Structure probing data (2A3 and DMS) for a 207-nucleotide construct. 2A3 adducts were read by reverse transcription with SuperScript II with manganese. DMS adducts were read by reverse transcription with MarathonRT. Values cover nucleotides 27 to 156. Source: RMDB library OK3TST, as collected in RNAgym.
RNA sequence: GGGAACGACUCGAGUAGAGUCGAAAACUAAGGUGAGAGCACGCCUGGUGCAUUUGAAGGAUAUCAGGACGCUUGCUGGCUGAGCAGGAGAGGUCAGAGAGGUAACGAAGGGCUAGAUUAUUUGGGGCUUUGAAGGCCAUCAUAAUAACUUUGACAAUAUUUUACUCGGAUUCGUCCGAGUAAAAUAAAAAGAAACAACAACAACAAC
Reactivity to 2A3 in 0.01 (KOAc 150mM, MgCl2 10mM, bicine 150mM(pH8.5), 24C), signal-to-noise 2, nucleotides 027 to 156: c030u050a040a060g050g000u030g020a070g000a020g040c040a020c050g000c020c000u000g050g000u050g010c050a140u100u100u200g120a040a040g040g020a020u040a020u190c020a010g000g020a050c050g050c100u030u100g010c000u030g070g000c020u010g010a010g050c070a010g030g030a020g000a000g020g050u060c080a000g020a000g000a050g010g010u080a100a010c040g040a050a030g000g000g000c020u020a020g020a110u070u040a050u050u080u110g020g010g000g000c010u010u020u110g070a070a020g010g000c040c000a040u010c000a000u040a150a000u050a030a080c050u090u110u170g060a020c040a060a040
Reactivity to DMS in 0.01 (KOAc 150mM, MgCl2 10mM, bicine 150mM(pH8.5), 24C), signal-to-noise 2, nucleotides 027 to 156: c030u000a050a070g020g000u000g020a090g000a130g030c020a040c080g040c040c000u020g040g040u030g010c060a110u000u000u000g020a140a170g000g020a170u000a070u000c040a070g000g020a100c050g030c060u010u010g030c020u010g020g000c030u020g000a100g030c000a070g010g000a120g010a090g060g010u000c040a060g030a130g030a090g010g010u020a040a090c100g010a080a100g000g010g040c010u000a040g030a080u000u000a130u000u000u000g020g030g010g010c010u000u000u020g010a130a200g020g030c010c020a020u000c090a050u010a040a010u000a040a070c040u000u000u010g000a110c050a090a160